[RMDB]
RNA sequence: GGGAACGACUCGAGUAGAGUCGAAAAGCGUACUACGAGUGGUUAAGGAGGAUGGUCGAAACAUAUCCCAAAUAGGAUAUGUAGUAGACCAUCUACCCACCCUUAACGUAACAUCUCGUAUCGCAAACCGAACUAACGCCUUCGGGCGUUAGUUCGGCGAUCAAGUAAAGUUCGCUUUACUUGAUCGAAAAGAAACAACAACAACAAC
Reactivity to 2A3 in 0.01 (KOAc 150mM, MgCl2 10mM, bicine 150mM(pH8.5), 24C), signal-to-noise 5, nucleotides 027 to 156: g010c010g030u090a060c070u010a000c030g000a000g010u060g010g000u070u010a010a000g010g010a010g020g000a010u000g000g010u010c000g000a010a000a010c000a000u000a010u030c020c050c070a180a300a170u300a110g000g000a000u000a000u000g000u000a010g010u000a000g000a000c000c000a000u000c010u010a010c010c000c010a020c000c000c000u000u000a000a000c010g060u080a060a060c040a270u160c010u000c010g010u010a020u290c000g000c000a060a030a010c000c000g000a010a000c000u000a000a000c000g000c000c020u060u120c250g080g000g000c000g000u000u000a000g000u000u000c010g000g000
Reactivity to DMS in 0.01 (KOAc 150mM, MgCl2 10mM, bicine 150mM(pH8.5), 24C), signal-to-noise 2, nucleotides 027 to 156: g050c040g050u000a070c120u000a020c000g020a000g050u000g030g020u010u020a000a010g030g000a170g020g010a020u010g020g030u000c010g030a270a280a190c000a000u000a000u000c000c000c030a020a130a240u000a060g010g000a020u000a010u000g000u000a100g000u000a230g000a010c000c010a010u000c000u000a000c000c000c060a300c220c010c000u000u000a010a020c000g020u000a090a030c120a040u010c000u010c000g000u000a000u000c010g020c040a070a110a140c000c000g020a020a000c000u000a010a020c020g000c000c000u000u010c300g060g000g030c000g020u000u000a000g010u000u000c010g000g010